[RMDB]
RNA sequence: GGGAACGACUCGAGUAGAGUCGAAAAACAUCGAUGAUUCGUCAUCGAUGUAAAAAAACCUUUGUGGUGGUACCUAGGCUUGGAUUUACCCAUUGGGUUGUCAGCCUGCGUACACACCACUCUGGUAAAAACGGGUUAACCUUCGGGUUAACCCGAAACAAGUCCAAAGGUUCGCCUUUGGACUUGUAAAAGAAACAACAACAACAAC
Reactivity to 2A3 in 0.01 (KOAc 150mM, MgCl2 10mM, bicine 150mM(pH8.5), 24C), signal-to-noise 2, nucleotides 027 to 156: a000c010a010u000c030g000a000u010g000a010u010u220c290g060u080c120a000u010c000g000a000u000g010u010a000a010a000a010a000a000a010c030c000u060u000u010g000u000g000g000u000g000g010u000a000c000c020u030a010g000g000c040u060u190g110g080a060u300u190u140a040c000c000c080a300u200u300g010g020g000u020u010g010u020c010a010g000c000c000u000g070c000g000u000a000c300a050c000a010c070c010a020c000u000c000u010g010g000u080a100a060a090a000a000c020g030g000g020u000u000a000a000c000c000u030u100c230g030g000g000u000u000a000a000c000c000c000g000a000a000